[RMDB]
RNA sequence: GGGAACGACUCGAGUAGAGUCGAAAACGCGAGGAAACCAAGCGUGUCCCCCCCAGGACAUUUGGCAGCCCCCCUCGCCUCACGGAGGACGACUUUGGGCUUCUCAACUACGCGCUCGUGGAGAUGCGGAUCGCAGAACUUUCGAGUUCUGCGAUCCAAAAGAAACAACAACAACAAC
Reactivity to DMS in 0.01 (KOAc 150mM, MgCl2 10mM, bicine 150mM(pH8.5), 24C), signal-to-noise 1, nucleotides 027 to 126: c010g080c000g040a300g000g000a020a130a200c120c000a000a300g030c210g020u000g040u000c000c000c020c000c020c090c060a020g000g000a100c180a000u000u040u060g040g120c100a020g000c090c030c030c180c020c010u120c020g020c030c040u000c040a050c100g060g020a040g000g000a000c020g000a100c140u040u000u040g020g000g000c050u000u000c090u020c000a050a090c130u000a010c000g070c010g000c130u000c060g080u000g000g020a040g070a040u000g000c140
Reactivity to 2A3 in 0.01 (KOAc 150mM, MgCl2 10mM, bicine 150mM(pH8.5), 24C), signal-to-noise 2, nucleotides 027 to 126: c000g000c020g000a000g000g080a170a130a100c070c000a060a040g030c000g060u020g050u020c030c010c000c000c000c010c000a040g000g030a040c030a050u100u060u100g040g030c010a010g020c010c000c000c020c040c020u000c010g000c010c010u040c010a080c020g130g000a060g040g000a030c010g010a030c080u120u140u110g040g030g000c000u040u030c010u000c010a050a100c060u110a040c110g020c000g040c010u060c000g000u080g040g050a150g000a010u090g020c090